[RMDB]
RNA sequence: GGGAACGACUCGAGUAGAGUCGAAAACAGCGGCUCCGCGCUUGGCACAACAAUGGUAUGCGUGGUUUGCGGCCCUAAUUUAUUCAGCACGCGACUGCCGCAUCCCGCACGGGAGGCGCAGCUGCUGCGUUAUAAUGGCCUUCGGGCCAUUAUAACGAAAAGAAACAACAACAACAAC
Reactivity to 2A3 in 0.01 (KOAc 150mM, MgCl2 10mM, bicine 150mM(pH8.5), 24C), signal-to-noise 2, nucleotides 027 to 126: c000a000g000c040g000g010c020u100c080c070g000c010g030c040u020u030g090g020c040a020c030a240a130c090a240a210u130g130g000u170a020u040g010c000g050u080g000g050u030u070u210g000c010g000g000c000c010c000u030a070a030u100u160u230a210u120u180c060a020g000c040a040c110g110c020g050a050c070u050g080c010c040g010c000a020u020c000c010c010g020c000a030c020g060g020g050a030g000g000c000g000c000a000g000c000u010g010c000u010g000
Reactivity to DMS in 0.01 (KOAc 150mM, MgCl2 10mM, bicine 150mM(pH8.5), 24C), signal-to-noise 2, nucleotides 027 to 126: c060a030g040c020g020g000c010u000c160c080g030c000g010c010u000u000g010g030c060a090c120a070a080c250a050a130u000g020g010u000a050u000g000c010g030u010g000g000u010u010u010g020c010g020g030c000c110c120u000a040a070u000u020u010a080u030u000c130a030g010c060a070c050g010c040g000a030c060u000g000c040c020g000c020a020u000c040c000c010g000c130a050c090g000g010g000a050g000g020c000g040c060a030g000c040u000g010c020u000g000
Structure probing data (2A3 and DMS) for a 177-nucleotide construct. The RNA was probed in 150 mM KOAc, 10 mM MgCl2 and 150 mM bicine (pH 8.5) at 24 C. For DMS, 1,284 sequencing reads were counted. It was measured as part of the RMDB library RFMREP. For 2A3, 1,526 sequencing reads were counted.